[RMDB]
RNA sequence: GGGAACGACUCGAGUAGAGUCGAAAAGAUAUGGAACUUUAAGCGACCAUCCCAAUUGAGUCCGUGUGUGUCGGAAACGACACACGGACAAUGAUGUUGGGAGUGGUCGCUUAAAGUUCCUAAGUCAGAAAACUAAAGAGUUCGCUCUUUAGUUUUCAAAAGAAACAACAACAACAAC
Reactivity to DMS in 0.01 (KOAc 150mM, MgCl2 10mM, bicine 150mM(pH8.5), 24C), signal-to-noise 2, nucleotides 027 to 126: g000a080u000a300u010g000g000a000a000c000u000u000u000a020a010g000c020g020a000c000c000a120u000c000c000c000a000a020u000u000g010a140g030u000c000c000g020u000g020u010g040u000g020u000c000g010g010a140a090a270c000g010a050c020a020c010a000c020g000g010a020c010a160a060u030g020a110u010g010u000u000g000g020g010a030g030u000g030g000u000c010g000c000u000u000a000a010a000g000u000u000c000c000u000a000a050g000u010c080a240